[RMDB]
RNA sequence: GGGAACGACUCGAGUAGAGUCGAAAAGGCCUCGUAAAAAGCCGCAAAGUUAUAGUUGCAAACGACGAUAACUACGCUCUAGCCGCUUAAUGCCGCUAGCCAUCUACCACACGCUUUGCACAUGGGCAGUGGAUUUGAUGGUCAUCUCACAUCGUGCCAACGACUGAUACUUCGGUAUCAGUCGUUGAAAAGAAACAACAACAACAAC
Reactivity to DMS in 0.01 (KOAc 150mM, MgCl2 10mM, bicine 150mM(pH8.5), 24C), signal-to-noise 1, nucleotides 027 to 156: g020g010c000c030u010c100g000u040a050a080a110a030a020g040c040c030g020c080a030a100a120g020u000u000a020u000a090g010u000u000g020c060a120a170a220c020g020a020c010g000a060u010a030a050c000u000a110c140g000c010u000c050u000a050g020c000c070g000c060u000u010a070a150u010g000c020c070g030c060u000a070g010c020c020a010u000c010u000a100c010c020a030c050a140c090g020c000u020u020u000g010c040a070c120a040u000g010g000g020c040a150g020u000g000g000a070u000u000u000g000a060u000g030g000u000c070a020u010c000u000c050a080c020a030u000c040g040u000g000c080
Reactivity to 2A3 in 0.01 (KOAc 150mM, MgCl2 10mM, bicine 150mM(pH8.5), 24C), signal-to-noise 4, nucleotides 027 to 156: g060g010c000c020u040c050g070u090a150a100a000a010a010g050c070c030g000c110a180a160a010g010u030u010a020u020a050g010u010u050g090c140a130a100a050c120g020a000c010g010a010u010a030a010c020u080a020c060g010c030u000c000u040a000g030c020c020g020c060u080u300a130a030u300g010c010c010g000c010u000a000g000c000c000a010u000c010u030a030c010c000a020c010a030c170g010c000u000u020u060g000c000a000c000a010u020g000g000g000c010a010g000u010g000g070a130u210u040u200g010a010u010g000g050u040c060a130u060c030u030c010a040c000a010u040c120g010u010g000c000